[RMDB]
RNA sequence: GGGAACGACUCGAGUAGAGUCGAAAAACAUAUUACGAUAUGAUUCAGAUGGUGUCUUACUGGUUCGUACUAAGGGACAUAAUGGUUUCUUGUUUCCAACCAAAGAACAAGUGGCGAGCCUGAAUAAAAAACUGACUGCCGUUCGCGGCAGUCAGAACCGGAGAAGAUAGUUCGCUAUCUUCUCCGGAAAAGAAACAACAACAACAAC
Reactivity to 2A3 in 0.01 (KOAc 150mM, MgCl2 10mM, bicine 150mM(pH8.5), 24C), signal-to-noise 1, nucleotides 027 to 156: a000c010a010u210a010u050u150a060c080g080a020u030a000u160g080a070u070u180c090a120g080a120u070g030g060u030g030u050c030u050u060a060c020u060g000g010u010u030c050g030u050a100c020u030a080a040g050g020g020a030c030a070u180a110a120u170g000g000u000u010u020c010u030u020g010u000u040u040c000c010a050a050c010c040a000a060a070g010a030a010c030a000a060g010u000g040g000c040g010a010g000c000c010u030g060a060a000u080a050a120a010a000a010a050c000u000g010a010c000u000g000c020c010g010u020u070c230g010c000g080g030c030a000g000u000c000a010g010a000a000